[RMDB]
RNA sequence: GGGAACGACUCGAGUAGAGUCGAAAAGGUGAACACAUAAUCAUAGUUCGCGCGCAAGGCGUUCAGUGCGGCAACAAUGGCAUCCUCUUCAUCGGGAACAAUCCGCACCUCCUUGAGAUCAAUGCCACAUUUACUGGUACUUCGGUACCAGUAAAUGAAAAGAAACAACAACAACAAC
Reactivity to DMS in 0.01 (KOAc 150mM, MgCl2 10mM, bicine 150mM(pH8.5), 24C), signal-to-noise 6, nucleotides 027 to 126: g000g030u010g010a050a060c140a110c130a080u000a090a080u010c140a090u000a080g010u000u000c060g010c010g040c070g010c130a060a120g000g010c130g030u010u000c090a090g020u000g030c020g020g010c300a070a040c130a080a070u000g010g010c070a050u000c060c010u000c090u000u000c110a050u000c100g010g000g010a040a070c130a070a100u000c030c020g000c050a030c030c050u000c020c000u000u000g000a050g000a060u000c090a030a080u000g010c030c020a170
Reactivity to 2A3 in 0.01 (KOAc 150mM, MgCl2 10mM, bicine 150mM(pH8.5), 24C), signal-to-noise 5, nucleotides 027 to 126: g080g010u030g040a040a000c050a000c020a140u160a180a070u220c040a040u070a120g040u050u040c030g000c000g000c010g000c090a060a040g060g010c040g050u060u070c060a030g010u010g040c020g030g040c030a070a030c040a080a160u050g040g000c030a040u020c000c030u050c020u100u090c050a100u090c000g010g010g030a030a060c030a040a070u010c000c010g010c020a030c000c000u020c000c000u040u070g050a060g010a080u110c050a020a060u070g040c010c010a050